[RMDB]
An RNA of 170 nucleotides, treated with 2A3 and DMS and read out base by base.
RNA sequence: GGGAACGACUCGAGUAGAGUCGAAAAAGAGGGGGGGACUUGGAGCACAGGGGUCCAGUUCAGUCCGUGGGAUUACCCCGGAUCUCCCGUUCUCCACACUCCUUCCCCCCCCGGGCUCCUCCAAUAAGUAGCAAAAGCUUCGGCUUUUGCAAAAGAAACAACAACAACAAC
Reactivity to 2A3 in 0.01 (KOAc 150mM, MgCl2 10mM, bicine 150mM(pH8.5), 24C), signal-to-noise 4, nucleotides 027 to 129: a000g260a230g000g000g000g000g000g010g000a000c000u030u090g010g000a020g000c220a020c040a090g000g000g020g020u010c020c010a020g020u070u120c060a010g010u000c010c010g050u300g000g050g000a280u140u300a300c000c000c010c020g010g010a050u020c020u040c020c010c000g000u000u000c000u000c010c000a000c000a000c020u010c000c000u010u020c000c000c000c000c000c000c050c000g000g030g000c020u020c000c010u000c020c010a070a060u200a180a000g150u170a020
Reactivity to DMS in 0.01 (KOAc 150mM, MgCl2 10mM, bicine 150mM(pH8.5), 24C), signal-to-noise 3, nucleotides 027 to 129: a130g090a200g060g000g040g030g000g040g000a010c280u030u040g050g000a120g010c170a050c110a290g000g000g000g040u010c080c060a040g030u030u080c130a130g020u040c030c010g020u120g090g000g000a290u040u160a280c050c010c030c060g010g000a030u030c000u030c220c020c020g020u040u020c020u020c040c040a120c240a150c050u020c000c000u000u080c010c000c020c020c020c170c010c090g030g000g030c020u030c000c000u050c000c050a110a110u090a080a120g000u000a150
Source: RMDB library 15KLIB, as collected in RNAgym. Conditions: 150 mM KOAc, 10 mM MgCl2 and 150 mM bicine (pH 8.5), 24 C.